This 177-nucleotide RNA was probed chemically with 2A3. For 2A3 the reverse transcriptase was SuperScript II with manganese. Values cover nucleotides 27 to 126. Source: RMDB library OK1LIB, as collected in RNAgym. The RNA was probed in 150 mM KOAc, 10 mM MgCl2 and 150 mM bicine (pH 8.5) at 24 C.

RNA sequence: GGGAACGACUCGAGUAGAGUCGAAAAGGCGUAGCGGCACACCAUGAUCUCGGUGGCCGGCCCGACGUCGAUGAUCCGCCGCAGUGUCGCCGGCGCCACCUGAGGCUGGUCGCCCAGCAUCAGCACGCCAGCCCGUGGAUUUCGAUCCACGGGCUGGAAAAGAAACAACAACAACAAC
Reactivity to 2A3 in 0.01 (KOAc 150mM, MgCl2 10mM, bicine 150mM(pH8.5), 24C), signal-to-noise 2, nucleotides 027 to 126: g030g000c080g000u040a040g030c000g020g000c000a000c000a000c040c060a160u260g030a070u070c100u050c000g000g000u010g000g030c040c000g000g000c030c030c030g040a100c100g000u040c030g000a030u110g020a070u030c010c030g010c000c070g010c130a170g040u000g030u040c060g000c040c020g100g030c000g000c020c010a050c000c000u020g000a010g050g000c000u000g020g000u170c090g060c110c000c000a010g000c030a000u040c000a000g120c030a030c100g010